[RMDB]
Conditions: 150 mM KOAc, 10 mM MgCl2 and 150 mM bicine (pH 8.5), 24 C. The record gives the reactivity of an RNA of 177 nucleotides to DMS and 2A3. For 2A3 the reverse transcriptase was SuperScript II with manganese. For DMS the reverse transcriptase was MarathonRT. The DMS profile rests on 17,813 reads. Source: RMDB library OK2TRN, as collected in RNAgym.
RNA sequence: GGGAACGACUCGAGUAGAGUCGAAAAGUUUUUAGAGGUGCCCCCAAUACAUACUGUUCAGCGGACUUUGCUUUUAAGGACGGCAUCAAGUUCCUUUUCCGGCACUUCCUGCAGGAUGGGUUCACCCAACUGAUAGGAUAUUCGUAUCCUAUCAGUUAAAAGAAACAACAACAACAAC
Reactivity to DMS in 0.01 (KOAc 150mM, MgCl2 10mM, bicine 150mM(pH8.5), 24C), signal-to-noise 9, nucleotides 027 to 126: g000u000u000u010u010u010a100g010a150g020g010u000g000c180c070c010c020c030a080a100u010a070c120a110u000a080c090u000g000u000u010c080a070g030c120g010g000a050c130u000u000u000g000c020u000u000u010u000a050a050g000g000a040c080g010g010c130a100u010c180a060a100g010u000u000c000c000u000u000u000u000c100c100g000g000c020a050c160u000u000c040c040u000g020c030a030g000g000a080u000g000g000g000u000u000c050a060c020c010c050
Reactivity to 2A3 in 0.01 (KOAc 150mM, MgCl2 10mM, bicine 150mM(pH8.5), 24C), signal-to-noise 4, nucleotides 027 to 126: g010u050u030u030u140u240a130g040a130g050g020u030g020c010c010c000c010c020a010a010u090a120c030a020u160a070c020u030g030u080u140c050a030g050c030g050g010a020c020u050u080u140g000c010u050u110u070u050a030a000g000g000a010c010g020g040c030a060u080c070a120a050g030u110u070c000c000u060u030u030u020c030c000g010g000c010a010c000u040u010c010c010u030g010c000a010g010g050a060u060g030g010g000u030u040c030a040c020c000c000